[RMDB]
RNA sequence: GGGAACGACUCGAGUAGAGUCGAAAAGAUAUGGAUGGAGAGCGAUGUGACUAUAGAUUCGGAAACGAAUCUACGAAUCACUAAGCUCUAUGAAGUCCUAAGUCAAACUAGUGCUUCGGCACUAGAAGAAUCUUUACUUGUUCGCAAGUAAAGAUUCAAAAGAAACAACAACAACAAC
Reactivity to DMS in 0.01 (KOAc 150mM, MgCl2 10mM, bicine 150mM(pH8.5), 24C), signal-to-noise 6, nucleotides 027 to 126: g010a030u000a300u010g010g010a020u000g000g000a010g010a020g000c010g000a260u000g010u000g010a020c050u000a290u000a000g010a010u000u000c000g000g000a080a080a180c010g000a020a000u000c000u010a000c060g010a050a110u000c000a000c000u010a170a300g010c000u000c000u000a090u010g010a120a190g000u000c000c010u000a030a130g020u000c040a140a110a210c010u000a000g010u000g000c010u000u010c240g050g010c000a000c000u000a000g000a100a100
Reactivity to 2A3 in 0.01 (KOAc 150mM, MgCl2 10mM, bicine 150mM(pH8.5), 24C), signal-to-noise 3, nucleotides 027 to 126: g020a010u100a030u180g010g000a000u010g030g020a010g010a000g010c000g020a060u210g020u000g000a010c030u030a000u020a070g010a020u000u000c000g040g000a060a080a050c000g010a000a010u000c000u000a000c030g110a070a240u020c000a000c000u030a100a020g000c000u000c000u010a080u010g000a010a000g000u010c000c000u030a130a010g050u050c030a050a040a080c020u000a000g010u000g010c000u040u120c300g140g000c010a010c010u010a010g000a010a010